[RMDB]
This 177-nucleotide RNA was probed chemically with 2A3.
RNA sequence: GGGAACGACUCGAGUAGAGUCGAAAAAGACGGUGUUACCGAUAAUGCCUACGCGUUCUGGCGAAGGUGUAAGCGAAAAGGCGUUGCCGGGCGCGUUUAUCUGUUCAAGGGAGACAGUACCCGACGCGUCCCUGCUGGGGUUCGCCCCAGCAGGGACAAAAGAAACAACAACAACAAC
Reactivity to 2A3 in 0.01 (KOAc 150mM, MgCl2 10mM, bicine 150mM(pH8.5), 24C), signal-to-noise 1, nucleotides 027 to 126: a000g040a000c090g000g090u190g050u300u130a030c000c060g000a030u030a250a000u110g110c000c000u000a000c000g000c000g050u120u300c000u060g080g000c050g140a170a230g080g050u100g050u050a300a000g000c080g000a000a000a000a000g010g000c020g050u000u000g010c000c000g020g000g000c000g000c000g000u000u010u010a060u000c030u000g000u000u030c140a040a070g100g030g000a170g110a140c000a150g000u000a050c030c070c110g090a090c000g000c050